Record summary
Conditions: 150 mM KOAc, 10 mM MgCl2 and 150 mM bicine (pH 8.5), 24 C. This 177-nucleotide RNA was probed chemically with DMS.
[RMDB]
RNA sequence: GGGAACGACUCGAGUAGAGUCGAAAACGGGUAUAGGCGUAGGCAGCUAAUCCAUACUCGCUGUCGUUGGCCAAGCGCAGGCCUUCCUCUUCAGUGUCAAAGAUAGUCACCGGAGCAACUGGCCCGACGUCCUCUACGAUUUCGAUCGUAGAGGACGAAAAGAAACAACAACAACAAC
Reactivity to DMS in 0.01 (KOAc 150mM, MgCl2 10mM, bicine 150mM(pH8.5), 24C), signal-to-noise 2, nucleotides 027 to 126: c000g020g020g010u010a060u000a130g020g000c110g050u020a080g000g040c070a130g020c030u000a150a140u000c040c070a100u000a070c070u030c120g020c140u000g020u000c030g000u000u010g020g120c020c030a130a110g020c010g000c110a170g000g020c060c010u000u000c060c010u000c030u000u000c050a020g030u030g000u000c070a030a110a080g090a100u010a050g010u000c020a040c000c020g030g000a060g000c130a040a140c110u000g000g000c000c030c030g030a090
For DMS the reverse transcriptase was MarathonRT. Values cover nucleotides 27 to 126.